An RNA of 177 nucleotides, treated with 2A3 and read out base by base. The RNA was probed in 150 mM KOAc, 10 mM MgCl2 and 150 mM bicine (pH 8.5) at 24 C.
RNA sequence: GGGAACGACUCGAGUAGAGUCGAAAAUAACUAUCGUCUUGAGUCCAACACGACUUAACGGGUUGGCAUGGAUUGUAGGCGCCGCCCUAUACCUUGUCUGCCUCCCCGCGGUGCAUGGAGCCGGGCCGUGCAACGGCUUCUUCGGAAGCCGUUGCACAAAAGAAACAACAACAACAAC
Reactivity to 2A3 in 0.01 (KOAc 150mM, MgCl2 10mM, bicine 150mM(pH8.5), 24C), signal-to-noise 2, nucleotides 027 to 126: u130a060a020c010u030a050u250c150g030u010c000u010u080g070a070g020u060c000c050a120a050c120a020c030g120a060c030u080u060a130a040c010g040g010g000u000u010g000g010c000a050u040g050g010a070u050u150g030u030a010g000g000c050g080c070c090g030c000c000c000u000a000u010a020c000c020u030u070g030u000c070u070g010c020c010u000c050c010c020c020g000c000g010g000u090g000c070a070u060g020g030a000g010c020c010g020g000g080c050c050

2A3 adducts were read by reverse transcription with SuperScript II with manganese.